[RMDB]
RNA sequence: GGGAACGACUCGAGUAGAGUCGAAAAGAUAUGGACGUGGCGACUUUUGACGUGCACUCGGAAACGAGAGCACGAUAAGUCGCACGUCCUAAGUCAAAAGCGCAUGGGGGUUCGCCCCCAUGCGCAAUCGUAUUGAAUGGUUCGCCAUUCAAUACGAAAAAGAAACAACAACAACAAC
Reactivity to 2A3 in 0.01 (KOAc 150mM, MgCl2 10mM, bicine 150mM(pH8.5), 24C), signal-to-noise 2, nucleotides 027 to 126: g010a010u040a020u050g000g010a010c010g020u040g280g300c010g020a010c030u140u170u210u300g120a060c010g000u010g020c010a020c040u010c000g010g000a020a040a000c010g000a010g020a010g010c000a000c000g010a000u040a100a000g000u000c000g000c000a000c010g000u000c010c000u010a010a000g000u000c010a000a010a140a100g000c020g000c010a010u010g030g000g020g000g000u050u050c120g120c000c000c000c000c000a000u000g010c010g000c000a000a000
Reactivity to DMS in 0.01 (KOAc 150mM, MgCl2 10mM, bicine 150mM(pH8.5), 24C), signal-to-noise 3, nucleotides 027 to 126: g000a060u000a280u010g010g010a020c000g010u000g010g030c000g000a010c000u000u000u000u000g020a160c060g010u000g000c000a120c000u000c000g010g000a090a050a120c000g020a010g000a050g020c000a000c000g010a040u010a020a030g010u000c000g000c000a000c000g000u000c010c000u000a000a080g000u010c020a100a080a100a140g010c010g030c000a000u000g000g010g000g010g000u000u000c230g010c000c010c000c000c000a000u010g010c010g010c000a010a000